[RMDB]
RNA sequence: GGGAACGACUCGAGUAGAGUCGAAAACCUUUGGCUACUACCCGGUGGAAACAACUGGAGCUUCAACGCCUUUUUUUCCAAUCUUCUUUAGCACCGGGCUAGGGAGUAAGCCCGUGGAACCUUAGUUUUGUUCCCUCGGGACUUACUUGUGGUUCCUACAAACGGUUAAGUUCGCUUAACCGUUUGUAAAAGAAACAACAACAACAAC
Reactivity to 2A3 in 0.01 (KOAc 150mM, MgCl2 10mM, bicine 150mM(pH8.5), 24C), signal-to-noise 1, nucleotides 027 to 156: c000c000u070u040u040g050g000c030u100a070c000u030a010c300c000c010g030g020u000g020g070a140a080a030c030a170a010c210u160g070g000a070g030c030u290u160c140a080a050c080g030c000c060u050u030u070u030u000u080u040c120c020a090a120u070c140u300u040c000u080u230u150a100g060c000a010c000c000g000g000g000c010u010a000g000g010g000a000g000u000a000a000g020c010c010c010g020u010g000g000a000a020c020c020u070u080a210g040u190u240u250u230g010u020u010c020c000c060u080c000g000g000g060a120c000u000u010a000c000u000u030g010u000g010g090u020u030c000c000u000